[RMDB]
RNA sequence: GGGAACGACUCGAGUAGAGUCGAAAAGAUAUGGAGGUUGCAGCUGGAGCUUACGCGAACGAAGAACUUUCUCGGAAACGAGAAAGGGAGUUCGAGGUAAGCGUUGAAAGCUGCAACCUCCUAAGUCCUCGUAAUCAGUGUUCGCACUGAUUACGAGAAAAGAAACAACAACAACAAC
Reactivity to DMS in 0.01 (KOAc 150mM, MgCl2 10mM, bicine 150mM(pH8.5), 24C), signal-to-noise 1, nucleotides 027 to 126: g000a140u020a300u010g010g000a000g000g000u020u000g000c000a020g020c000u030g000g010a200g030c000u000u000a000c000g010c010g010a000a010c000g000a150a230g020a150a190c010u000u010u000c000u000c030g010g000a120a160a130c020g020a010g000a020a030a000g010g000g000a040g030u020u000c000g020a050g030g000u000a000a000g020c020g010u000u040g040a090a130a020g010c000u010g000c000a010a000c010c000u050c000c020u000a010a080g020u020c030

Annotation
Source: RMDB library TTRINS, as collected in RNAgym. This 177-nucleotide RNA was probed chemically with DMS. For DMS, 1,214 sequencing reads were counted.